[RMDB]
RNA sequence: GGGAACGACUCGAGUAGAGUCGAAAAGCAGAGUAUAGUAUCAUAUGAUUCUGACACAUCAAUAAAGAAUGAUGCAAUUAUCCUCUAUGAUAAUUCCCGAAAUUGGAUCAGUGAAGGGCAGAAUUGCGAGACAUACUAGGUUCGCCUAGUAUGUCUCAAAAGAAACAACAACAACAAC
Reactivity to DMS in 0.01 (KOAc 150mM, MgCl2 10mM, bicine 150mM(pH8.5), 24C), signal-to-noise 7, nucleotides 027 to 126: g020c060a060g020a070g020u000a070u000a050g020u010a020u000c020a020u000a040u010g010a050u000u010c040u000g010a200c300a070c030a020u010c020a040a100u010a070a130a300g000a080a100u000g010a020u000g000c020a040a140u010u000a010u000c010c010u000c010u000a020u000g000a010u000a020a110u010u000c000c000c010g010a030a060a060u000u000g000g010a060u000c050a040g010u010g000a040a040g000g000g020c070a050g000a050a050u000u000g010c300
Reactivity to 2A3 in 0.01 (KOAc 150mM, MgCl2 10mM, bicine 150mM(pH8.5), 24C), signal-to-noise 4, nucleotides 027 to 126: g060c060a010g010a030g130u110a100u060a150g070u010a030u070c000a010u020a010u170g020a020u160u050c020u070g060a030c010a000c000a090u040c010a010a190u170a300a250a060g160a050a150u060g010a020u010g000c020a010a050u050u010a010u030c000c000u000c000u020a020u030g020a000u000a040a100u060u030c000c000c000g010a090a020a020u150u100g090g030a040u080c050a040g030u040g090a060a050g050g000g000c020a000g070a120a170u110u100g060c060